[RMDB]
RNA sequence: GGGAACGACUCGAGUAGAGUCGAAAAACUGACCUGCCGAGCAGCCUGAUUCGCUUCGUAAAACCUGUCAGGAACUGUAACUGCGGACGAUUAUUCGUACGCGAUGGCGGCGUAACAGCCCCCAUCUGUCUCGCGUCGCUCCUGGCCCUUGGGGAGCCCAGUACCUUCUCUUCGGAGAAGGUACUGGAAAAGAAACAACAACAACAAC
Reactivity to 2A3 in 0.01 (KOAc 150mM, MgCl2 10mM, bicine 150mM(pH8.5), 24C), signal-to-noise 2, nucleotides 027 to 156: a000c030u000g000a040c000c000u040g010c040c030g020a020g000c010a010g030c020c000u030g000a050u140u040c060g020c040u110u090c100g140u190a050a160a110a210c000c010u000g000u000c010a020g060g000a090a230c010u010g000u080a100a030c010u090g000c000g000g000a010c020g040a040u030u100a050u300u240c050g000u070a000c030g030c030g000a010u080g000g010c000g000g030c090g010u040a110a030c000a020g010c000c000c020c000c010a060u000c010u010g170u020c010u020c030g070c000g030u010c010g000c010u000c000c000u010g020g030c040c020c000u050u110g170g000g000g010a000g040c000

An RNA of 207 nucleotides, treated with 2A3 and read out base by base. For 2A3 the reverse transcriptase was SuperScript II with manganese. Reactivities are rounded to 0.1 and cut off at 0 and 3. For 2A3, 887 sequencing reads were counted.